[RMDB]
Structure probing data (DMS and 2A3) for a 177-nucleotide construct. It was measured as part of the RMDB library OK1LIB.
RNA sequence: GGGAACGACUCGAGUAGAGUCGAAAAUAGAUAAUGAGAUGUAUGCUAUUUACACAUCUGGUACGACCGGGAUGCCUAAAGGGGUUGCCAUACGACAACGAAAUUUGUUGAAUUUAGUGCAUGCAUGUGCACUGAUGUUAUUCGUAACAUCAGUGCAAAAAGAAACAACAACAACAAC
Reactivity to DMS in 0.01 (KOAc 150mM, MgCl2 10mM, bicine 150mM(pH8.5), 24C), signal-to-noise 5, nucleotides 027 to 126: u040a060g010a050u010a090a090u020g000a080g000a030u010g020u000a040u010g010c050u020a060u010u010u010a110c140a140c080a040u010c030u000g010g000u020a060c110g000a090c010c040g010g000g000a050u010g010c030c040u010a030a090a070g030g010g020g030u000u030g010c040c010a090u020a080c140g000a050c050a030a050c040g000a060a080a110u010u000u010g000u000u000g010a110a080u020u000u010a040g040u010g020c000a020u010g000c070a030u010g020
Reactivity to 2A3 in 0.01 (KOAc 150mM, MgCl2 10mM, bicine 150mM(pH8.5), 24C), signal-to-noise 4, nucleotides 027 to 126: u160a020g100a070u180a050a150u250g120a090g000a070u040g020u060a010u030g070c070u040a060u110u090u110a060c070a000c020a030u010c020u030g020g000u090a060c030g050a040c030c040g050g010g010a030u170g030c020c040u090a100a080a030g070g030g010g000u090u040g070c020c000a030u080a170c110g050a050c040a090a000c050g090a020a000a080u080u090u070g020u020u020g030a040a070u110u070u160a090g030u050g050c010a000u050g020c000a010u090g020
The RNA was probed in 150 mM KOAc, 10 mM MgCl2 and 150 mM bicine (pH 8.5) at 24 C.